[RMDB]
RNA sequence: GGGAACGACUCGAGUAGAGUCGAAAAGGUUACUUGUAUUGGUGACCAGGCAUAGAAGAUUAAGGGACAUAGCUUCUACCCCAUAACUGAUCUGAAAGCCGGUUUUGUGAAUGCUGCCAUAAAGUGACCGAAUACUCAUAUUCGUAUGAGUAUUCGGAAAAGAAACAACAACAACAAC
Reactivity to 2A3 in 0.01 (KOAc 150mM, MgCl2 10mM, bicine 150mM(pH8.5), 24C), signal-to-noise 4, nucleotides 027 to 126: g020g000u030u030a020c010u060u040g150u240a160u130u150g010g010u020g010a010c010c050a080g060g000c010a100u060a130g050a070a020g030a110u100u110a120a130g050g000g020a040c080a130u150a040g030c040u100u060c010u070a130c030c000c000c000a030u100a150a050c050u050g010a030u030c010u040g030a070a020a040g000c020c000g040g010u070u080u070u060g070u010g040a080a050u100g010c030u050g020c000c020a060u110a100a100a030g070u070g060a010
Reactivity to DMS in 0.01 (KOAc 150mM, MgCl2 10mM, bicine 150mM(pH8.5), 24C), signal-to-noise 7, nucleotides 027 to 126: g010g010u000u000a000c010u000u000g010u010a090u010u000g010g020u000g000a020c010c020a130g020g010c060a100u010a030g010a140a030g000a050u000u000a090a120g010g000g010a080c130a110u010a090g000c080u000u000c050u000a140c100c010c010c040a110u000a060a110c130u010g000a040u000c030u000g010a120a110a120g010c040c020g000g020u000u010u000u010g020u010g000a100a080u010g010c070u000g010c010c030a060u010a050a040a080g010u000g010a160
An RNA of 177 nucleotides, treated with 2A3 and DMS and read out base by base. Reactivities are given for positions 27 through 126. For DMS, 9,142 sequencing reads were counted.